About this RNA:
Structure probing data (DMS and 2A3) for a 177-nucleotide construct. The 2A3 profile rests on 1,022 reads. Values are in units of 0.01, from 0 to 300, in steps of 10. DMS (dimethyl sulfate) methylates the pairing face of unpaired adenines and cytosines. It was measured as part of the RMDB library OK2TRN. The RNA was probed in 150 mM KOAc, 10 mM MgCl2 and 150 mM bicine (pH 8.5) at 24 C. DMS adducts were read by reverse transcription with MarathonRT.

RNA sequence: GGGAACGACUCGAGUAGAGUCGAAAAUGAGGUCCUUCACGUGGAGUUUCUUGAUGACAUUGGCGUGGGGGAGCUCUCCGAGGAGGAUAUUGCCGAGAUUAAGAAGCUGAAGGAGAAGUACGGCGAACGAUACCCAGUACUUCGGUACUGGGUAUCGAAAAGAAACAACAACAACAAC
Reactivity to DMS in 0.01 (KOAc 150mM, MgCl2 10mM, bicine 150mM(pH8.5), 24C), signal-to-noise 2, nucleotides 027 to 126: u050g010a060g030g020u000c000c000u010u000c000a070c010g050u000g010g010a130g010u000u000u010c130u020u020g020a130u000g000a040c080a180u020u010g010g000c050g010u000g000g000g000g010g010a020g000c020u000c010u010c020c030g020a130g000g010a080g010g010a050u010a040u000u000g020c050c030g020a110g000a110u000u010a080a120g010a080a050g010c070u010g010a100a060g000g010a080g000a080a050g010u000a090c070g010g000c060g010a050a130
Reactivity to 2A3 in 0.01 (KOAc 150mM, MgCl2 10mM, bicine 150mM(pH8.5), 24C), signal-to-noise 2, nucleotides 027 to 126: u170g000a000g060g210u010c000c000u000u040c000a010c040g040u060g070g090a100g030u060u080u080c090u140u300g260a200u250g020a060c050a140u110u110g010g010c010g030u030g000g010g020g000g000a000g010c000u000c000u000c000c000g020a030g040g030a000g000g030a020u030a070u180u100g000c020c010g030a020g000a140u240u200a210a090g050a050a010g090c040u110g030a110a060g100g090a060g010a080a000g060u110a040c040g010g020c030g030a030a000